[RMDB]
Overview: An RNA of 207 nucleotides, treated with DMS and 2A3 and read out base by base.
RNA sequence: GGGAACGACUCGAGUAGAGUCGAAAACAAAACUUCGGUUUUGGGCCACCGUAGGCCUGCCCGGCAGCCGAGGAUCUAUCGUAACAUCACACUUCGAAAGAGGUGUGUGGAUAGGGAGGCUGUCAGGCCUAAACGGGAUAUUACGGUUCGCCGUAAAACCCAUAAGCAAUUUCGAUUGCUUAUGGGUAAAAGAAACAACAACAACAAC
Reactivity to DMS in 0.01 (KOAc 150mM, MgCl2 10mM, bicine 150mM(pH8.5), 24C), signal-to-noise 2, nucleotides 027 to 156: c020a030a020a020a030c010u000u000c280g030g000u000u000u000u000g010g020g040c040c000a110c000c050g010u000a080g010g000c030c010u010g010c050c030c020g010g010c010a040g000c010c010g010a080g040g010a050u010c020u000a010u000c000g020u010a190a100c090a080u000c000a010c010a010c000u010u000c010g000a200a130a270g000a020g010g010u010g010u020g010u010g010g010a030u000a000g010g020g020a050g040g000c020u000g020u010c000a020g020g010c010c060u000a030a120a070c040g000g000g010a150u010a130u000u000a010c000g030g010u000u010c250g030c000c000g010u000a010a030a130
Reactivity to 2A3 in 0.01 (KOAc 150mM, MgCl2 10mM, bicine 150mM(pH8.5), 24C), signal-to-noise 5, nucleotides 027 to 156: c010a000a060a010a030c050u100u110c260g140g000u020u020u110u120g060g010g040c040c040a060c000c030g010u010a010g000g010c020c010u030g020c040c060c020g030g000c010a000g000c000c000g040a240g020g000a010u010c000u010a000u000c010g240u180a090a100c030a090u240c010a010c000a000c010u010u000c020g070a140a080a060g000a010g010g010u000g000u010g010u000g010g000a000u000a010g000g010g000a010g000g000c000u000g000u000c000a000g000g010c000c000u090a190a140a040c030g000g010g030a060u150a090u200u100a010c020g000g000u030u060c160g020c080c000g020u030a010a090a010
The reactions ran in a buffer of 150 mM KOAc, 10 mM MgCl2 and 150 mM bicine (pH 8.5), at 24 C.